[RMDB]
Notes
Chemical mapping of a 207-nucleotide RNA with DMS and 2A3. The data come from the RNA Mapping Database (RMDB), library M2RFPK. For 2A3 the reverse transcriptase was SuperScript II with manganese. DMS (dimethyl sulfate) methylates the pairing face of unpaired adenines and cytosines.

RNA sequence: GGGAACGACUCGAGUAGAGUCGAAAAACACCGGACUAGGCGUACGCGCCUAGUACGGUGAGGGUCAGACGAGCAGACACCCAUUGAAGUUCUGCUCUACCGUUAAAAGGAAGUAAACCAUCAUGAAAGAAGUGCGCUUGGUUCGCCAAGCGCACAAGUUACCAAUUAAGUUCGCUUAAUUGGUAACAAAAGAAACAACAACAACAAC
Reactivity to DMS in 0.01 (KOAc 150mM, MgCl2 10mM, bicine 150mM(pH8.5), 24C), signal-to-noise 1, nucleotides 027 to 156: a120c010a000c010c000g000g010a000c010u000a010g020g010c000g030u020a100c260g040c020g010c010c000u000a000g000u000a000c030g000g060u010g030a070g020g020g090u000c000a180g020a150c110g000a050g010c000a050g010a090c020a030c010c000c020a190u040u010g020a000a080g000u020u010c010u000g020c000u000c010u000a010c050c060g000u030u010a070a050a090a130g000g000a080a180g010u000a080a070a080c030c050a050u010c070a130u000g020a060a140a230g020a080a090g010u000g000c020g050c040u010u000g000g000u000u030c300g060c010c020a000a000g000c010g040c000a000c000a010a000
Reactivity to 2A3 in 0.01 (KOAc 150mM, MgCl2 10mM, bicine 150mM(pH8.5), 24C), signal-to-noise 2, nucleotides 027 to 156: a000c010a000c000c000g010g010a000c000u000a000g020g010c000g030u080a010c230g030c020g000c100c030u000a000g000u000a000c000g000g010u000g000a060g000g000g000u030c020a040g010a190c020g010a060g000c000a010g010a000c010a000c010c000c060a080u040u300g040a010a010g000u050u010c000u000g000c010u010c000u000a000c030c010g030u080u120a070a130a070a030g070g050a080a010g100u170a050a130a040c050c050a090u220c070a110u230g180a060a060a120g100a160a040g030u000g000c000g000c020u010u040g000g000u040u010c070g050c070c020a000a000g000c010g010c000a000c000a000a000